RNA sequence: GGGAACGACUCGAGUAGAGUCGAAAACUAGACUUGACUUGGUCUGUGCGCCGGCAUGGAGCAGGAUUCAGAUCUGGAGUCAGGCCGCGCGACUAAUCAACGACCUCCCAGAGUCCGUGUUCGAGGGAUGGGUACAUUACUUCGGUAAUGUACCCAUAAAAGAAACAACAACAACAAC
Reactivity to 2A3 in 0.01 (KOAc 150mM, MgCl2 10mM, bicine 150mM(pH8.5), 24C), signal-to-noise 2, nucleotides 027 to 126: c030u030a030g080a020c040u020u030g020a010c010u030u080g000g000u000c040u060g130u090g030c110g010c090c160g000g000c010a040u070g060g000a080g060c060a040g030g080a040u140u020c130a060g070a300u000c010u060g010g000a060g030u000c040a030g040g000c030c010g050c000g020c030g030a030c000u070a020a120u080c070a070a000c080g070a040c030c000u010c000c040c020a000g000a020g070u000c020c040g070u070g030u130u080c050g050a070g000g040g010
Reactivity to DMS in 0.01 (KOAc 150mM, MgCl2 10mM, bicine 150mM(pH8.5), 24C), signal-to-noise 3, nucleotides 027 to 126: c090u010a080g000a120c080u000u000g010a080c150u010u000g000g020u000c010u000g030u010g020c020g000c020c020g020g020c020a050u010g000g000a090g020c010a220g010g000a080u000u010c240a120g010a080u000c000u010g010g020a110g010u010c020a060g000g010c020c020g010c120g030c030g010a060c060u000a060a060u000c070a080a060c090g000a110c060c030u000c010c030c010a230g000a060g020u010c020c090g010u000g030u000u000c040g000a060g000g000g000

This 177-nucleotide RNA was probed chemically with 2A3 and DMS. 2A3 adducts were read by reverse transcription with SuperScript II with manganese. For DMS, 2,175 sequencing reads were counted.